RNA sequence: GGGAACGACUCGAGUAGAGUCGAAAAUGGGCUUAAUACCUAGGUGAUGAGUUGAUAGGUGCAGCAAACCAUCGUGGCACAUGUUUAACUAUGUAACAAACCUGCACAUCCUGCACAUGUACCCCAGCGCGAGCAGAAAAUUCGUUUUCUGCUCGCGAAAAGAAACAACAACAACAAC
Reactivity to DMS in 0.01 (KOAc 150mM, MgCl2 10mM, bicine 150mM(pH8.5), 24C), signal-to-noise 2, nucleotides 027 to 126: u000g030g000g000c080u000u030a120a080u010a100c060c050u000a090g060g020u000g000a090u000g000a070g020u000u000g000a080u000a090g010g000u020g000c030a060g000c080a070a060a110c110c060a040u000c120g000u010g010g030c030a070c100a060u000g010u000u000u010a090a100c070u000a050u000g010u010a090a020c180a120a050a080c130c030u030g000c030a010c080a080u000c050c000u000g000c040a020c030a060u000g020u000a180c060c020c000c070a060g020
Structure probing data (DMS) for a 177-nucleotide construct. The RNA was probed in 150 mM KOAc, 10 mM MgCl2 and 150 mM bicine (pH 8.5) at 24 C. Source: RMDB library OK2TST, as collected in RNAgym.